[RMDB]
About this RNA
An RNA of 177 nucleotides, treated with DMS and 2A3 and read out base by base. It was measured as part of the RMDB library OK2TRN. The reactions ran in a buffer of 150 mM KOAc, 10 mM MgCl2 and 150 mM bicine (pH 8.5), at 24 C. Reactivities are given for positions 27 through 126.
RNA sequence: GGGAACGACUCGAGUAGAGUCGAAAAUGACCGCCGGGUCGACGCGGACAUUAGCGAACGGCGCUGCGGUCACCUCACGCAGCACGGCAACCACGGCUUUCAACGCCUCGCUAUUGGGUCUCGGCGGACUUUAAGAUCGGUUCGCCGAUCUUAAAGUAAAAGAAACAACAACAACAAC
Reactivity to DMS in 0.01 (KOAc 150mM, MgCl2 10mM, bicine 150mM(pH8.5), 24C), signal-to-noise 7, nucleotides 027 to 126: u010g010a210c000c010g030c010c030g010g020g020u000c020g010a090c090g010c030g010g010a120c070a040u000u010a030g010c010g010a080a110c060g020g010c100g000c000u000g020c020g010g000u000c060a160c030c030u010c040a200c030g010c000a020g010c020a060c070g000g000c090a070a080c190c130a100c150g010g010c020u000u000u010c180a090a130c230g010c020c010u010c020g010c010u000a050u000u010g000g000g000u000c020u000c010g000g010c000g010g000
Reactivity to 2A3 in 0.01 (KOAc 150mM, MgCl2 10mM, bicine 150mM(pH8.5), 24C), signal-to-noise 4, nucleotides 027 to 126: u110g060a030c000c000g000c000c000g050g000g020u030c040g010a080c050g000c040g070g040a050c020a060u060u010a000g000c010g020a080a040c050g020g020c090g010c050u000g010c000g010g000u020c010a040c010c010u010c000a030c020g010c010a010g010c000a000c030g020g010c050a060a050c030c030a070c100g010g000c000u070u260u200c120a150a070c080g000c020c000u020c010g010c010u030a040u050u080g050g030g020u000c010u020c030g020g000c010g000g000